[RMDB]
RNA sequence: GGGAACGACUCGAGUAGAGUCGAAAAGCGUGCACUGCGUUACAUGAUAUGCAUGUAUGGCAUGAGCACUGGAACCGGAAACAGUGCUCUAGUCUAUAGUGAGGCAUUAACGGAGAAGAUGCGAGACACUACCUUCGGUCUUCGGGCCGAGGGUAGUAAAAGAAACAACAACAACAAC
Reactivity to DMS in 0.01 (KOAc 150mM, MgCl2 10mM, bicine 150mM(pH8.5), 24C), signal-to-noise 2, nucleotides 027 to 126: g000c080g030u010g050c090a160c100u020g000c060g100u010u010a050c300a090u000g010a160u030a090u080g010c030a020u000g000u000a010u040g000g000c000a010u000g000a000g000c000a010c020u000g000g010a020a000c000c000g020g000a020a000a000c030a010g050u000g020c000u000c030u300a100g000u010c030u020a040u000a130g010u000g030a050g000g000c000a020u030u010a120a150c000g090g000a100g000a040a180g040a060u010g000c020g000a190g000a160c170
Reactivity to 2A3 in 0.01 (KOAc 150mM, MgCl2 10mM, bicine 150mM(pH8.5), 24C), signal-to-noise 5, nucleotides 027 to 126: g050c000g040u090g020c130a010c080u160g060c030g030u010u030a110c110a130u110g070a100u140a020u170g080c030a000u040g010u080a020u040g010g000c000a000u010g000a000g000c000a000c000u000g010g010a010a020c010c000g010g010a020a020a000c000a000g010u000g000c000u000c000u000a060g000u000c020u040a060u020a040g090u060g030a050g220g050c010a010u010u010a030a060c000g120g050a040g000a300a250g050a100u150g060c040g040a050g040a060c080